[RMDB]
RNA sequence: GGGAACGACUCGAGUAGAGUCGAAAAGCCGUGACGGUCAUACCGGUAAAGAUAGUGCGCGUCACGGGCGAUACGGUUAUCCGGCCACAUGCUGAGGGUGAUGUCCGGGUGCAGCUCCGGGUCGGGCGUACCAGAGUAGUUUCGACUACUCUGGUACAAAAGAAACAACAACAACAAC
Reactivity to 2A3 in 0.01 (KOAc 150mM, MgCl2 10mM, bicine 150mM(pH8.5), 24C), signal-to-noise 4, nucleotides 027 to 126: g030c000c010g000u000g000a010c010g020g060u080c010a010u050a130c030c030g060g100u230a180a160a010g090a070u190a090g110u060g070c130g000c000g050u000c000a000c000g010g010g000c020g000a050u100a100c040g040g030u100u100a040u060c010c000g020g000c020c010a050c010a030u140g060c050u070g060a170g060g070g020u080g050a130u060g070u020c000c010g000g000g050u040g000c020a020g030c000u000c020c040g010g020g020u020c010g010g010g050c050
Reactivity to DMS in 0.01 (KOAc 150mM, MgCl2 10mM, bicine 150mM(pH8.5), 24C), signal-to-noise 5, nucleotides 027 to 126: g000c010c010g010u000g010a030c000g010g000u000c030a070u010a070c040c020g010g010u000a110a120a140g010a060u010a050g020u000g000c070g020c030g010u000c010a010c020g010g010g030c030g010a110u020a080c100g030g010u000u000a060u010c010c000g010g000c030c050a060c070a050u010g000c050u000g000a220g010g010g020u000g000a090u000g000u010c020c010g010g010g010u000g010c080a100g010c040u000c080c040g010g010g030u000c010g000g000g020c170

An RNA of 177 nucleotides, treated with 2A3 and DMS and read out base by base. The RNA was probed in 150 mM KOAc, 10 mM MgCl2 and 150 mM bicine (pH 8.5) at 24 C. The DMS profile rests on 7,212 reads. High 2A3 reactivity points to a flexible backbone, as in loops and unpaired stretches. DMS (dimethyl sulfate) methylates the pairing face of unpaired adenines and cytosines.